[RMDB]
RNA sequence: GGGAACGACUCGAGUAGAGUCGAAAAAGAAACUGCGAACGGCUCAUUAAAACAGUUAUAGUCUACUUGACAUUUAUAAGGAUAACUACGGAAAAGCUGUAGCUAAUACUUGCAUUAUCCUUUUGGAUAAGUAUUUGUUAGAAGGAAUUAUAACAAACCAGAAUAGGUUGUUCGCAACCUAUUCUGGAAAAGAAACAACAACAACAAC
Reactivity to 2A3 in 0.01 (KOAc 150mM, MgCl2 10mM, bicine 150mM(pH8.5), 24C), signal-to-noise 3, nucleotides 027 to 156: a020g040a010a060a000c120u110g020c040g040a080a020c030g080g000c050u030c060a070u070u180a080a060a060a090c030a020g000u020u040a020u030a030g020u010c050u070a090c020u060u080g020a000c000a020u020u080u080a120u030a070a020g010g000a000u000a060a050c010u010a000c030g020g060a090a070a070a140g130c020u020g010u040a010g000c000u040a040a040u090a180c010u030u050g060c030a130u010u020a000u050c000c000u080u150u130u300g000g000a010u010a040a000g010u010a040u010u050u030g000u010u010a010g020a060a030g060g020a060a020u070u070a020u040a040a000c000a030a030a070

Conditions: 150 mM KOAc, 10 mM MgCl2 and 150 mM bicine (pH 8.5), 24 C. The record gives the reactivity of an RNA of 207 nucleotides to 2A3. Reactivities are given for positions 27 through 156. 2A3 is a SHAPE reagent: it acylates the 2'-hydroxyl of flexible nucleotides of all four kinds. 2A3 adducts were read by reverse transcription with SuperScript II with manganese.